[RMDB]
RNA sequence: GGGAACGACUCGAGUAGAGUCGAAAACGGUCGGGCUGCUCUUGUUGUGCCGGAGAGAAAGGUAGUUGGCUUUCGGGCUGGCUGCUGUUUCCUUAGUGCGUUGAACAACCGGCUCAGAACUGGAGCGGCAUCCACCUUCAUUCGUGAAGGUGGAUGCAAAAGAAACAACAACAACAAC
Reactivity to 2A3 in 0.01 (KOAc 150mM, MgCl2 10mM, bicine 150mM(pH8.5), 24C), signal-to-noise 2, nucleotides 027 to 126: c020g000g050u030c030g020g040g000c020u010g020c000u000c000u050u080g050u040u030g020u030g010c000c000g030g000a100g000a010g000a000a020a000g030g000u010a000g010u000u000g020g010c000u030u010u070c160g080g010g000c000u040g020g000c000u000g000c000u020g300u030u020u000c020c000u020u100a030g070u020g080c110g060u020u190g080a130a000c000a070a010c050c000g010g000c000u020c020a060g010a090a020c040u030g000g000a020g000c030g010
Reactivity to DMS in 0.01 (KOAc 150mM, MgCl2 10mM, bicine 150mM(pH8.5), 24C), signal-to-noise 1, nucleotides 027 to 126: c170g010g030u000c130g000g000g010c010u000g000c000u000c020u020u010g030u000u020g010u010g000c000c010g000g000a060g000a230g000a000a000a090g010g100u000a000g030u000u000g000g040c000u000u000u120c130g030g000g040c010u000g020g000c000u000g020c000u010g020u000u000u000c000c010u000u010a130g060u000g030c100g060u070u000g020a200a060c020a060a140c030c020g030g010c000u000c070a160g000a090a010c090u010g030g010a010g040c000g020